[RMDB]
RNA sequence: GGGAACGACUCGAGUAGAGUCGAAAACUGUAUUCGAAAUCGCGACUCCGGAACCAAUUACUGAUAAUGUAGAAGACCAUACAGACACCGUCACAUACACUAGUGAUAGCAUUAAUACAGUAAAUGCAUCAUCUGGAGAAUCCACAACAGACGAGACCGCUACUUUAACCUUCGGGUUAAAGUAGCGAAAAGAAACAACAACAACAAC
Reactivity to 2A3 in 0.01 (KOAc 150mM, MgCl2 10mM, bicine 150mM(pH8.5), 24C), signal-to-noise 2, nucleotides 027 to 156: c020u060g080u100a090u100u010c070g000a010a040a190u100c010g000c040g050a020c000u000c000c000g020g030a010a020c020c020a020a110u080u010a010c000u010g030a000u010a090a050u120g040u040a030g040a220a010g040a080c000c030a030u110a270c040a020g100a020c040a010c040c080g000u040c010a040c000a010u300a110c100a050c170u110a010g010u020g070a020u030a030g000c000a000u000u000a010a090u050a090c000a000g040u050a000a040a020u080g010c010a030u020c000a020u000c080u000g060g050a020g020a040a030u040c070c030a040c010a200a000c000a040g140a080c080g010a010g040a040c010